[RMDB]
Description: An RNA of 177 nucleotides, treated with 2A3 and DMS and read out base by base. For 2A3 the reverse transcriptase was SuperScript II with manganese. DMS adducts were read by reverse transcription with MarathonRT. The reactions ran in a buffer of 150 mM KOAc, 10 mM MgCl2 and 150 mM bicine (pH 8.5), at 24 C. 2A3 is a SHAPE reagent: it acylates the 2'-hydroxyl of flexible nucleotides of all four kinds. For 2A3, 15,222 sequencing reads were counted.

RNA sequence: GGGAACGACUCGAGUAGAGUCGAAAAGAUCACCUGUUCGCAGGUGAUCAAUCUCCCACUUGAUCGAAGUCUCACAGCCACGUUGCCCACGAGGCACGGGCGUAUUGAUCCGCUUCGGCGGAUCAAAACCAGUAGAUGAUUUCGAUCAUCUACUGGUAAAAGAAACAACAACAACAAC
Reactivity to 2A3 in 0.01 (KOAc 150mM, MgCl2 10mM, bicine 150mM(pH8.5), 24C), signal-to-noise 8, nucleotides 027 to 126: g000a000u000c000a000c000c000u010g010u040u080c260g010c100a000g000g010u000g000a000u000c000a010a000u010c010u000c010c010c000a030c040u070u200g090a130u110c080g070a120a040g190u030c030u030c110a100c060a040g020c020c000a300c070g080u190u110g000c010c020c010a200c190g020a300g010g000c000a000c000g000g000g010c010g000u020a020u020u040g000a010u000c000c000g000c000u050u060c200g120g000c000g010g000a010u000c000a000a000a000
Reactivity to DMS in 0.01 (KOAc 150mM, MgCl2 10mM, bicine 150mM(pH8.5), 24C), signal-to-noise 8, nucleotides 027 to 126: g000a000u000c000a000c000c000u000g000u000u010c200g030c000a010g000g010u000g010a000u010c000a020a080u000c190u000c000c010c010a100c090u010u010g000a040u000c040g010a110a110g010u000c030u000c050a130c240a140g000c000c000a120c010g010u010u000g010c000c000c010a130c300g010a190g000g000c000a010c010g000g000g010c000g010u010a010u000u000g000a000u000c000c000g010c000u000u010c200g030g010c010g000g000a000u000c000a000a010a120